Chemical mapping of a 177-nucleotide RNA with DMS and 2A3. For 2A3 the reverse transcriptase was SuperScript II with manganese. High 2A3 reactivity points to a flexible backbone, as in loops and unpaired stretches. Conditions: 150 mM KOAc, 10 mM MgCl2 and 150 mM bicine (pH 8.5), 24 C.
[RMDB]
RNA sequence: GGGAACGACUCGAGUAGAGUCGAAAAUUCGCUGCCUUUUCCUCCGCAGUUGCCACUGGGUCCUAAACACACUCAUGUUCAUGGUGCACGUAAAACCGUUCGACGACGAGUUCGUCCUGCCCCACUGCAAAGCGUGCAAUUUCGAUUGCACGCUUUGAAAAGAAACAACAACAACAAC
Reactivity to DMS in 0.01 (KOAc 150mM, MgCl2 10mM, bicine 150mM(pH8.5), 24C), signal-to-noise 3, nucleotides 027 to 126: u020u010c060g020c020u000g000c040c030u000u000u000u000c010c050u010c070c070g020c030a080g020u010u020g000c010c050a050c080u010g000g020g030u010c040c020u030a040a030a140c180a060c100a060c030u030c000a050u000g010u030u010c080a070u030g040g000u000g000c070a080c110g000u000a010a110a100a070c110c060g030u020u020c070g020a030c010g010a080c020g010a030g010u010u000c000g000u030c010c030u000g020c030c010c010c000a110c110u010g000
Reactivity to 2A3 in 0.01 (KOAc 150mM, MgCl2 10mM, bicine 150mM(pH8.5), 24C), signal-to-noise 7, nucleotides 027 to 126: u060u030c030g010c050u050g030c010c010u070u070u030u040c000c010u040c000c020g000c010a050g030u060u090g070c020c010a030c050u040g030g000g050u030c010c020u090a060a110a010c040a010c010a020c030u060c050a070u150g020u100u040c060a080u100g060g000u050g050c040a010c080g060u100a050a100a030a050c050c000g030u030u040c020g020a030c020g010a010c010g020a020g030u110u080c000g020u030c000c010u040g020c000c010c000c000a030c020u040g030
It was measured as part of the RMDB library OK1LIB.